[RMDB]
RNA sequence: GGGAACGACUCGAGUAGAGUCGAAAAAGAGGAACUAAAGGUCUUGAAUUAAUUAUUGCCGCAAUGUGGCAAAUCCGUGCGCAGGUCAUCAGCGGGCAAAACGGCAGGGCCAACAACUCGGUAAAAAGAUAGUAUCCUGGUUCGCCAGGAUACUAUCAAAAGAAACAACAACAACAAC
Reactivity to 2A3 in 0.01 (KOAc 150mM, MgCl2 10mM, bicine 150mM(pH8.5), 24C), signal-to-noise 6, nucleotides 027 to 126: a000g070a030g040g040a090a030c060u100a150a100a040g030g000u020c010u030u070g110a120a080u140u120a130a080u140u170a160u100u070g010c000c010g020c110a090a190u230g030u110g040g000c000a050a050a030u090c040c010g010u050g010c020g000c040a020g000g080u040c020a120u050c000a050g030c040g010g060g030c060a080a060a020a000c000g010g000c020a020g020g000g010c010c010a010a010c010a010a020c030u040c040g010g010u120a100a110a020a030a020
Reactivity to DMS in 0.01 (KOAc 150mM, MgCl2 10mM, bicine 150mM(pH8.5), 24C), signal-to-noise 4, nucleotides 027 to 126: a070g010a070g000g000a120a100c110u000a070a110a130g010g000u000c000u020u030g010a070a120u050u030a060a070u020u030a140u020u000g000c000c000g010c110a100a100u050g050u010g020g000c010a020a030a040u020c040c020g000u000g000c170g030c010a090g010g000u020c080a050u030c130a090g000c040g010g000g010c040a050a100a140a070c010g000g020c010a010g000g010g000c020c040a050a050c140a070a140c050u000c020g010g000u020a050a070a070a080a090